[RMDB]
RNA sequence: GGGAACGACUCGAGUAGAGUCGAAAAAUAAAGUAGUCUCCUGCAGCGUCUGAGGUUUCCGUUGCAGUCCUCGGAACCAGGACGUCGGCGUGGCCUAGCGAGUUAUGGCGACGAAGGCCGUGAAAAACAAGCAUGCAUUGUUCGCAAUGCAUGCUUGAAAAGAAACAACAACAACAAC
Reactivity to DMS in 0.01 (KOAc 150mM, MgCl2 10mM, bicine 150mM(pH8.5), 24C), signal-to-noise 2, nucleotides 027 to 126: a100u020a080a060a030g000u000a070g010u000c060u010c020c020u000g000c050a180g000c060g020u000c010u010g000a060g010g000u010u010u010c020c020g030u010u020g000c090a200g000u000c100c030u000c030g030g010a030a020c020c010a300g000g010a060c000g000u000c050g020g030c030g020u000g000g020c030c000u000a120g020c060g000a130g000u000u000a090u010g010g000c020g020a080c070g010a090a120g000g030c010c030g010u000g000a030a050a070a060a140
Reactivity to 2A3 in 0.01 (KOAc 150mM, MgCl2 10mM, bicine 150mM(pH8.5), 24C), signal-to-noise 1, nucleotides 027 to 126: a000u180a000a110a010g100u080a000g030u010c010u040c040c000u050g110c010a010g000c020g000u000c060u030g080a270g110g030u030u040u000c040c020g030u020u020g020c070a040g120u210c010c010u020c000g000g000a020a010c000c000a000g040g000a000c020g010u060c060g090g000c040g020u080g000g020c000c000u010a030g070c020g030a050g020u090u140a160u150g150g000c000g000a080c020g050a040a000g010g000c000c000g000u040g090a140a090a040a000a000

An RNA of 177 nucleotides, treated with DMS and 2A3 and read out base by base. DMS adducts were read by reverse transcription with MarathonRT. The DMS profile rests on 1,487 reads. The 2A3 profile rests on 1,067 reads. Reactivities are given for positions 27 through 126. The data come from the RNA Mapping Database (RMDB), library M2PK90.